[RMDB]
An RNA of 207 nucleotides, treated with DMS and 2A3 and read out base by base. The 2A3 profile rests on 2,619 reads. For 2A3 the reverse transcriptase was SuperScript II with manganese. The data come from the RNA Mapping Database (RMDB), library M2RFPK.
RNA sequence: GGGAACGACUCGAGUAGAGUCGAAAAUCAUUGAGAUGCUGGGCGCUAUGGUCGUCCUCCUCCGGCUGAACUCCUUCUCAGCUGCUGACCGGCGCCGCACAGGCGGCAUCUCAGCUUCGUGUGCAAAAAAAGAAUGGUCGGUUCGCCGACCAUUCAAGAAUAUAGCACAGUUCGCUGUGCUAUAUUCAAAAGAAACAACAACAACAAC
Reactivity to DMS in 0.01 (KOAc 150mM, MgCl2 10mM, bicine 150mM(pH8.5), 24C), signal-to-noise 3, nucleotides 027 to 156: u010c060a140u010u010g020a010g020a040u000g000c000u010g020g000g020c010g030c020u000a050u020g030g020u000c000g010u000c050c030u000c040c010u010c050c030g000g000c000u010g010a030a130c120u010c120c090u010u000c110u010c010a030g030c000u000g010c060u010g010a040c020c010g000g010c010g040c010c010g020c040a070c130a150g030g000c020g000g020c010a020u000c000u000c020a000g000c090u000u000c130g010u000g000u000g040c030a000a010a100a120a110a160a200g010a030a030u000g020g030u010c000g030g000u000u010c300g020c000c000g010a010c000c000a000u000u000c010a040a130
Reactivity to 2A3 in 0.01 (KOAc 150mM, MgCl2 10mM, bicine 150mM(pH8.5), 24C), signal-to-noise 3, nucleotides 027 to 156: u150c040a040u080u090g000a010g000a000u000g000c010u040g020g030g000c010g000c030u100a170u300g030g000u020c020g030u070c030c050u040c010c000u020c030c030g010g000c010u010g000a020a050c060u130c130c050u190u090c040u000c050a000g000c020u030g010c070u100g010a010c000c000g020g000c000g000c000c000g000c020a030c020a030g150g040c010g000g000c000a000u000c000u010c010a010g000c010u230u200c100g100u100g020u030g060c070a050a070a040a080a000a000a030g000a010a000u000g000g000u000c000g000g030u030u040c120g030c080c000g000a000c000c000a000u000u000c000a000a000